Structure probing data (DMS and 2A3) for a 177-nucleotide construct. For DMS, 1,142 sequencing reads were counted. The data come from the RNA Mapping Database (RMDB), library M2PK50. For 2A3, 927 sequencing reads were counted. For DMS the reverse transcriptase was MarathonRT.
RNA sequence: GGGAACGACUCGAGUAGAGUCGAAAAUCGAUGGCGUUCGCGCCAUCGAAGAGCCGUACCGCGUAGCACGCGGAUAGGAGUGAAGAUAUGCAAGGCCAUGGAGGAGGCGUGCUUUCGAGCACGCCAAUCAUUUUGCGUUGUUCGCAACGCAAAAUGAAAAAGAAACAACAACAACAAC
Reactivity to DMS in 0.01 (KOAc 150mM, MgCl2 10mM, bicine 150mM(pH8.5), 24C), signal-to-noise 1, nucleotides 027 to 126: u010c000g030a010u000g000g000c000g020u020u020c300g020c070g000c000c000a000u000c000g000a020a050g000a060g000c010c030g000u010a210c000c000g020c020g020u000a150g030c110a300c010g000c000g020g000a070u000a020g010g000a100g010u010g000a060a020g000a070u000a110u000g010c050a040a030g040g000c020c020a090u020g000g000a120g010g000a100g020g000c000g000u000g020c000u000u000u000c100g020a020g000c000a000c000g020c000c000a030a020
Reactivity to 2A3 in 0.01 (KOAc 150mM, MgCl2 10mM, bicine 150mM(pH8.5), 24C), signal-to-noise 1, nucleotides 027 to 126: u040c030g000a000u000g000g020c010g000u060u000c300g000c020g000c110c010a000u000c000g020a000a000g010a010g020c030c000g070u090a100c000c000g000c000g000u040a080g100c160a040c090g050c030g000g020a030u070a030g020g000a010g100u100g070a040a040g050a130u100a040u140g070c070a040a120g130g000c070c010a030u200g010g050a090g110g000a090g000g040c010g020u010g000c060u120u080u210c240g050a010g000c010a010c000g010c000c000a000a000